[RMDB]
RNA sequence: GGGAACGACUCGAGUAGAGUCGAAAAGUAUUUUACUGAUAAUGUUGUAGCUCAAAUUUAUGCCCAUUUGUUAACAAUAGAUAGAUCACCGAAAUGGCUUGCUCGUCAGGCUAUUUCUGAUGAGGAAGACUGAAUCCAUGUUCGCAUGGAUUCAGUCAAAAGAAACAACAACAACAAC
Reactivity to DMS in 0.01 (KOAc 150mM, MgCl2 10mM, bicine 150mM(pH8.5), 24C), signal-to-noise 1, nucleotides 027 to 126: g020u000a030u010u000u000u000a090c050u020g010a120u000a040a070u000g020u030u010g000u010a110g030c130u000c050a040a050a050u010u000u000a060u000g000c050c000c010a210u010u020u000g010u010u000a040a070c100a050a030u010a050g020a100u020a110g010a160u000c020a020c100c070g010a000a030a040u000g010g000c010u000u000g000c020u000c200g000u000c000a000g010g020c080u000a030u000u000u000c010u000g020a020u000g010a020g000g010a070a120
Structure probing data (DMS) for a 177-nucleotide construct. The RNA was probed in 150 mM KOAc, 10 mM MgCl2 and 150 mM bicine (pH 8.5) at 24 C. The DMS profile rests on 840 reads.